Chemical mapping of a 177-nucleotide RNA with DMS. DMS adducts were read by reverse transcription with MarathonRT.
[RMDB]
RNA sequence: GGGAACGACUCGAGUAGAGUCGAAAAGAUAUGGAAAUGCCAUGAGGGAUGAAGAAGCUAUCGGAAACGAUAGCUUUGUUCCCUAUGGACCCAUUUCCUAAGUCAAAGAGAUGCUUCGGCAUCUCAAGUUCGAAAGUGGGUUCGCCCACUUUCGAACAAAAGAAACAACAACAACAAC
Reactivity to DMS in 0.01 (KOAc 150mM, MgCl2 10mM, bicine 150mM(pH8.5), 24C), signal-to-noise 1, nucleotides 027 to 126: g000a050u020a300u010g000g010a000a050a060u000g000c000c010a020u000g020a030g000g000g010a060u000g030a090a130g000a010a020g010c000u000a000u020c000g000g010a070a130a240c000g030a030u010a000g010c000u000u000u000g030u010u000c000c050c020u000a010u000g000g010a300c090c260c020a030u000u000u010c000c000u010a070a150g000u000c050a090a270a210g000a000g020a000u000g000c000u000u000c220g020g000c000a000u000c000u000c010a050a050